An RNA of 177 nucleotides, treated with 2A3 and read out base by base. For 2A3, 490 sequencing reads were counted. Reactivities are given for positions 27 through 126.
[RMDB]
RNA sequence: GGGAACGACUCGAGUAGAGUCGAAAACAAGAACUUUUAUAAUUUCUGAAAUGUACAUAGUAUGGUAGUCUUUCUCUGGAUACCAUUUUUUAUCAUUUUCUUUAGCAUCAAAGUUUUCUGGUGGCAUAGUACGGUACCAGUUCGCUGGUACCGUACUAAAAGAAACAACAACAACAAC
Reactivity to 2A3 in 0.01 (KOAc 150mM, MgCl2 10mM, bicine 150mM(pH8.5), 24C), signal-to-noise 1, nucleotides 027 to 126: c030a030a020g060a060a020c000u000u000u040u000a040u030a130a160u250u130u020c120u110g000a000a070a000u000g010u040a060c030a130u080a040g070u150a080u060g000g020u010a110g160u050c000u020u190u010c200u000c300u260g010g020a020u000a020c000c000a000u000u000u030u020u030u060a080u090c010a010u000u100u080u140c030u000u030u030a070g000c030a000u000c060a020a090a090g010u010u020u000u000c080u080g020g020u060g000g020c020a030u000